Chemical mapping of a 177-nucleotide RNA with 2A3 and DMS.
[RMDB]
RNA sequence: GGGAACGACUCGAGUAGAGUCGAAAAUCCGGUCAAUCCUGGAAUCGGGCAGACUUAUAGAGUCUUUAAGCGAAUAUUGACUCGAGGCGACCAUGGGGGACCUCAGUCAGAGCUGUAUAUGGAACAACAUUGCCUAUUCCUUCGGGAAUAGGCAAUGAAAAGAAACAACAACAACAAC
Reactivity to 2A3 in 0.01 (KOAc 150mM, MgCl2 10mM, bicine 150mM(pH8.5), 24C), signal-to-noise 4, nucleotides 027 to 126: u020c000c000g010g040u070c030a100a170u090c010c020u040g100g060a150a080u140c020g000g000g000c020a010g000a010c000u040u050a050u190a260g100a020g050u030c030u020u160u090a080a020g030c020g100a140a060u150a120u120u070g000a000c000u000c160g000a010g010g000c060g040a110c000c080a200u260g180g010g000g000g130a050c000c000u000c000a000g010u010c000a010g010a010g040c000u020g060u030a120u010a020u240g070g010a040a090c020a030a010
Reactivity to DMS in 0.01 (KOAc 150mM, MgCl2 10mM, bicine 150mM(pH8.5), 24C), signal-to-noise 5, nucleotides 027 to 126: u050c020c000g000g010u020c030a130a110u010c040c040u000g020g010a100a090u020c030g010g000g000c230a060g000a020c010u010u020a120u050a150g000a060g000u000c010u010u000u030a090a050g010c010g000a100a120u030a090u030u000g000a010c010u000c140g010a010g010g020c030g000a300c010c020a150u060g030g010g010g010g010a300c010c020u000c000a000g020u000c010a010g010a140g010c000u010g000u000a070u030a090u010g000g020a100a080c160a090a140
Values cover nucleotides 27 to 126. The RNA was probed in 150 mM KOAc, 10 mM MgCl2 and 150 mM bicine (pH 8.5) at 24 C.